[RMDB]
RNA sequence: GGGAACGACUCGAGUAGAGUCGAAAAGCGCCCCUCGGGGCGCUGCGCUGCAACGGCCUGCGAGCUCCCCAUCCGACCCGUCUUGAAACACGGACCAAGGAGUCUGACAUGCGUGCGAGUCGACGGGUAGGCAGCCAUAUUUCGAUAUGGCUGCCUAAAAAGAAACAACAACAACAAC
Reactivity to DMS in 0.01 (KOAc 150mM, MgCl2 10mM, bicine 150mM(pH8.5), 24C), signal-to-noise 1, nucleotides 027 to 126: g030c010g050c000c000c000c040u050c270g030g040g020g050c000g000c000u000g020c030g000c050u010g010c050a160a090c110g000g010c040c020u020g000c020g050a080g010c020u000c000c000c030c140a060u080c070c050g000a110c020c050c000g010u010c010u000u020g000a220a060a050c200a040c050g010g000a030c000c080a220a110g010g000a080g000u000c000u030g000a110c120a040u050g000c050g000u000g020c040g050a070g000u000c100g000a030c040g010g000g000
Reactivity to 2A3 in 0.01 (KOAc 150mM, MgCl2 10mM, bicine 150mM(pH8.5), 24C), signal-to-noise 1, nucleotides 027 to 126: g030c030g000c000c000c000c000u050c150g020g000g000g020c000g000c010u000g000c000g000c000u080g020c040a140a090c010g060g000c010c050u020g010c000g040a010g000c000u000c030c000c000c010a010u050c040c000g070a040c000c000c000g000u020c000u010u110g020a070a050a000c030a010c030g010g010a000c050c000a100a190g080g010a060g080u020c000u040g070a040c000a070u090g040c060g080u010g010c000g030a040g070u050c020g000a020c010g010g000g000

This 177-nucleotide RNA was probed chemically with DMS and 2A3.
For 2A3, 742 sequencing reads were counted.
It was measured as part of the RMDB library RFM100.
For 2A3 the reverse transcriptase was SuperScript II with manganese.
Reactivities are given for positions 27 through 126.
The RNA was probed in 150 mM KOAc, 10 mM MgCl2 and 150 mM bicine (pH 8.5) at 24 C.